Structure probing data (DMS) for a 177-nucleotide construct. The data come from the RNA Mapping Database (RMDB), library OK1LIB.

RNA sequence: GGGAACGACUCGAGUAGAGUCGAAAACAUCUCCGACAACGCGAACAGCUUGGUUCGGCGCGCUAGGACCAACGGCGACGCUGAGGUGCACCGGGCGGGAGAGAGUUCACGAACAGCCACCCGGCCAGUCCUGGUGCAGUUUCGACUGCACCAGGACAAAAGAAACAACAACAACAAC
Reactivity to DMS in 0.01 (KOAc 150mM, MgCl2 10mM, bicine 150mM(pH8.5), 24C), signal-to-noise 1, nucleotides 027 to 126: c240a130u050c090u000c000c000g000a170c090a070a070c030g010c070g000a120a300c240a000g000c130u220u000g000g090u000u000c050g190g110c000g070c110g000c110u000a000g000g000a070c040c070a120a010c090g000g000c000g000a120c010g000c000u000g000a030g120g110u000g100c030a160c030c000g020g030g000c000g000g000g000a000g010a200g000a050g130u000u030c000a130c240g000a010a010c080a090g000c260c050a010c000c010c000g000g050c130c070a000